The data come from the RNA Mapping Database (RMDB), library M2PK50. This 177-nucleotide RNA was probed chemically with DMS and 2A3. 2A3 adducts were read by reverse transcription with SuperScript II with manganese. Values cover nucleotides 27 to 126.

RNA sequence: GGGAACGACUCGAGUAGAGUCGAAAAGAAUGAAGAUUCGUCUUCAUUCAAAUAAAAAUAGCUAGAAAACGAUCAAAACUAGCAAUAUACAUAACGAUCGAAAAACACAGCGUUUCGACGCUGUGAACGAAGAAGCUAGAUUCGUCUAGCUUCUUCGAAAAGAAACAACAACAACAAC
Reactivity to DMS in 0.01 (KOAc 150mM, MgCl2 10mM, bicine 150mM(pH8.5), 24C), signal-to-noise 2, nucleotides 027 to 126: g000a000a000u000g010a000a000g000a020u000u010c180g030u010c030u000u000c000a000u000u000c010a030a150a120u010a020a100a050a110a110u000a160g010c000u000a000g010a050a080a060a060c060g010a010u000c040a170a120a170a060c000u000a010g000c000a040a040u000a140u010a040c190a090u010a030a100c190g000a010u000c000g010a110a060a060a070a200c000a000c000a010g010c000g010u000u000u040c170g010a020c000g040c000u000g010u010g020a000a060
Reactivity to 2A3 in 0.01 (KOAc 150mM, MgCl2 10mM, bicine 150mM(pH8.5), 24C), signal-to-noise 3, nucleotides 027 to 126: g000a000a020u010g000a000a010g020a010u020u110c160g030u000c050u000u000c000a000u010u010c000a020a010a000u070a010a030a000a010a020u120a010g000c000u010a000g010a070a110a030a060c010g000a000u020c030a010a050a020a110c010u000a000g000c000a040a040u120a020u020a040c090a050u170a170a100c090g000a010u010c010g030a080a020a020a060a000c000a000c000a010g010c000g000u030u080u110c200g050a000c000g000c010u010g000u000g010a020a020